Conditions: 150 mM KOAc, 10 mM MgCl2 and 150 mM bicine (pH 8.5), 24 C. The record gives the reactivity of an RNA of 177 nucleotides to 2A3 and DMS. The DMS profile rests on 2,618 reads. Reactivities are rounded to 0.1 and cut off at 0 and 3. Reactivities are given for positions 27 through 126. For DMS the reverse transcriptase was MarathonRT.

RNA sequence: GGGAACGACUCGAGUAGAGUCGAAAAAAGGAUGAUGUCCACCACGCCGUGCUGUCACGUUCUCGGUACCCUCGAUUUCCGUCUCUUCUUGCAUGCGUAUCCAACCGCCUCGCGGCUCCGCCGACCCCAUUGUGUCAUCGUUCGCGAUGACACAAUGAAAAGAAACAACAACAACAAC
Reactivity to 2A3 in 0.01 (KOAc 150mM, MgCl2 10mM, bicine 150mM(pH8.5), 24C), signal-to-noise 1, nucleotides 027 to 126: a000a000g100g020a080u110g000a070u120g080u040c000c000a010c010c010a040c050g040c010c010g070u070g050c040u060g040u110c010a050c070g030u110u030c050u040c000g000g060u100a120c010c000c000u040c000g070a060u020u050u010c010c020g070u010c000u000c000u100u020c010u020u030g000c030a050u070g010c010g030u060a070u020c010c010a010a030c020c020g010c000c000u030c050g040c040g050g010c020u000c010c030g030c020c000g010a040c000c010c000
Reactivity to DMS in 0.01 (KOAc 150mM, MgCl2 10mM, bicine 150mM(pH8.5), 24C), signal-to-noise 3, nucleotides 027 to 126: a090a090g000g010a060u000g020a040u000g010u010c020c010a100c050c010a090c080g020c060c040g020u010g010c060u000g020u000c050a120c030g020u000u000c020u000c060g010g020u020a080c050c020c030u010c040g010a120u000u000u010c020c020g020u010c020u000c020u000u000c020u000u000g020c070a050u010g010c080g010u010a080u000c080c070a050a110c060c060g010c040c020u000c070g020c060g020g000c040u000c030c030g010c040c030g000a090c000c000c010